[RMDB]
This 177-nucleotide RNA was probed chemically with 2A3 and DMS.

RNA sequence: GGGAACGACUCGAGUAGAGUCGAAAACAUUCGCAACACGGGCGUGCAGGGCGUGCUGGUGCAGCCUGGCGGGUCUGUGACGGCAUCCGCAUGGGUUCGGCCGACCACGAUCACCGGGGCGCAGGGGCGAGCAUGAGUGAUUCGUCACUCAUGCUCGAAAAGAAACAACAACAACAAC
Reactivity to 2A3 in 0.01 (KOAc 150mM, MgCl2 10mM, bicine 150mM(pH8.5), 24C), signal-to-noise 2, nucleotides 027 to 126: c000a030u150u130c070g020c090a040a100c080a030c090g010g080g020c110g130u080g000c110a100g030g090g000c060g040u060g040c020u110g030g080u120g000c030a020g020c010c000u040g100g000c060g010g000g000u000c030u050g080u100g080a050c040g010g000c020a010u070c020c010g010c150a130u160g040g000g020u070u080c030g070g000c020c000g020a040c070c000a020c000g010a060u050c020a030c130c010g000g020g000g000c030g040c000a020g000g010g000g000
Reactivity to DMS in 0.01 (KOAc 150mM, MgCl2 10mM, bicine 150mM(pH8.5), 24C), signal-to-noise 3, nucleotides 027 to 126: c090a160u020u010c050g010c050a090a130c070a070c070g000g020g000c020g000u010g010c080a120g010g000g000c060g000u020g020c050u010g020g010u010g020c070a060g020c020c030u030g010g020c030g000g000g010u000c020u000g000u000g020a140c100g020g000c130a050u010c020c020g030c090a070u030g000g000g000u020u000c110g020g000c020c020g010a070c120c010a050c040g020a090u010c080a110c070c020g000g000g020g020c100g010c060a080g000g010g000g020

DMS adducts were read by reverse transcription with MarathonRT. Conditions: 150 mM KOAc, 10 mM MgCl2 and 150 mM bicine (pH 8.5), 24 C. Source: RMDB library OK2TRN, as collected in RNAgym.